Structure probing data (DMS and 2A3) for a 177-nucleotide construct. The RNA was probed in 150 mM KOAc, 10 mM MgCl2 and 150 mM bicine (pH 8.5) at 24 C. High 2A3 reactivity points to a flexible backbone, as in loops and unpaired stretches. The data come from the RNA Mapping Database (RMDB), library TTRDES. The 2A3 profile rests on 6,017 reads.

RNA sequence: GGGAACGACUCGAGUAGAGUCGAAAAGAUAUGGAUGCCGCCAGGGAGCUCCCUUCGGAAACGAAGGAAGAGCGAAGAACUGGAGUGGGCAUCCUAAGUCAAAGCUCUCGGCUUCGGCCGAGAGCAAGUAUAACAGUAUCUUCGGAUACUGUUAUACAAAAGAAACAACAACAACAAC
Reactivity to DMS in 0.01 (KOAc 150mM, MgCl2 10mM, bicine 150mM(pH8.5), 24C), signal-to-noise 3, nucleotides 027 to 126: g000a040u010a300u010g000g010a000u000g000c000c000g000c000c000a020g010g030g000a110g010c010u000c010c000c000u000u000c000g000g000a120a080a180c000g000a030a000g000g010a120a100g020a040g020c010g010a100a150g030a180a200c020u010g000g020a090g040u010g020g010g030c000a010u000c000c000u010a020a080g000u000c030a090a110a200g000c000u000c000u000c010g010g010c000u000u020c270g020g010c000c000g000a010g010a010g000c000a010a010
Reactivity to 2A3 in 0.01 (KOAc 150mM, MgCl2 10mM, bicine 150mM(pH8.5), 24C), signal-to-noise 2, nucleotides 027 to 126: g010a000u080a040u180g010g000a010u010g000c000c010g000c020c010a020g030g050g020a030g010c010u000c030c000c000u000u000c000g030g010a080a040a040c010g000a010a010g020g000a150a200g020a000g000c030g100a180a030g040a060a010c020u020g070g060a040g300u300g060g060g000c000a000u000c000c000u000a050a000g000u000c020a060a080a150g010c000u000c000u010c010g010g020c050u070u260c300g170g040c030c000g000a000g020a000g000c000a000a000